[RMDB]
RNA sequence: GGGAACGACUCGAGUAGAGUCGAAAACGAAUUGAUUAAAGGCAUCACUCCACGAAUCUGAGGUGGUACGGAUUUCAGGUGUAUUCGUAUACGGUAUAGUAGAUUAUGGGGAGGAGAGUGAUUCCGCCACCACUGGCAGGUUCGCCUGCCAGUGGUGAAAAGAAACAACAACAACAAC
Reactivity to DMS in 0.01 (KOAc 150mM, MgCl2 10mM, bicine 150mM(pH8.5), 24C), signal-to-noise 1, nucleotides 027 to 126: c140g000a190a060u010u010g010a090u000u000a070a010a060g000g000c040a170u000c000a090c020u020c000c030a140c000g030a000a010u000c030u010g030a040g000g000u030g010g130u000a000c040g000g000a000u000u000u050c070a150g050g060u120g020u040a060u000u000c030g040u030a040u020a000c000g040g010u000a080u000a220g040u000a080g010a000u000u010a010u060g050g000g030g010a090g000g120a060g020a040g000u000g010a060u030u000c000c020g000c300
Reactivity to 2A3 in 0.01 (KOAc 150mM, MgCl2 10mM, bicine 150mM(pH8.5), 24C), signal-to-noise 3, nucleotides 027 to 126: c070g090a130a150u200u240g130a060u190u280a160a130a000g020g000c010a010u010c000a000c000u000c010c020a000c070g000a000a000u030c010u110g100a090g060g100u110g010g010u050a000c000g000g010a020u010u100u290c160a140g000g300u170g070u130a000u000u020c000g000u010a010u010a040c100g060g090u040a120u040a140g100u080a070g010a040u050u100a150u290g000g000g050g000a090g050g040a050g000a000g080u010g000a020u000u030c000c000g000c030

Chemical mapping of a 177-nucleotide RNA with DMS and 2A3.
For 2A3, 1,083 sequencing reads were counted.
For DMS the reverse transcriptase was MarathonRT.